[RMDB]
RNA sequence: GGGAACGACUCGAGUAGAGUCGAAAAGGGUAGGCUGUUUUCAGUCUACCCGAUGUGCCUGUUUUCAGGCACGGAUAUCAGCCAUCCGAUAGCCGAGGAUGGCCUAUCUGCUGAGCAUUCUGUGUGGAUUGUGAGGCAGUUAGCAGACGCGGCGACAAGGAUAUUAGCAUUUCGAUGCUAAUAUCCUAAAAGAAACAACAACAACAAC
Reactivity to DMS in 0.01 (KOAc 150mM, MgCl2 10mM, bicine 150mM(pH8.5), 24C), signal-to-noise 2, nucleotides 027 to 156: g010g020g030u010a010g050g020c010u000g020u000u000u000u020c000a000g020u000c000u000a010c000c000c000g000a010u000g030u000g020c010c020u000g070u000u000u000u000c070a030g020g010c030a020c000g000g020a140u000a050u000c050a100g010c010c010a040u000c000c000g000a100u000a160g030c010c030g000a300g000g010a070u000g000g000c010c010u000a010u000c020u000g000c000u010g010a300g010c020a050u010u000c000u020g070u010g030u010g010g010a050u010u000g000u010g000a300g020g010c000a030g030u000u010a020g000c090a210g000a170c100g050c050g020g040c030g050a150c140a250
Reactivity to 2A3 in 0.01 (KOAc 150mM, MgCl2 10mM, bicine 150mM(pH8.5), 24C), signal-to-noise 4, nucleotides 027 to 156: g000g000g000u000a000g000g000c000u020g100u180u160u200u300c010a000g000u000c000u000a000c000c000c010g000a010u010g010u000g000c000c010u070g060u160u070u090u300c020a010g000g010c000a000c000g020g010a130u180a040u080c080a030g000c010c000a000u000c000c010g090a080u080a060g000c010c020g000a010g000g000a000u010g000g000c010c000u000a010u000c000u000g000c000u010g010a010g000c000a010u000u000c020u040g230u100g190u300g240g010a000u040u010g010u010g010a050g000g000c010a000g000u000u010a000g000c030a020g040a150c110g010c040g190g000c000g000a020c070a040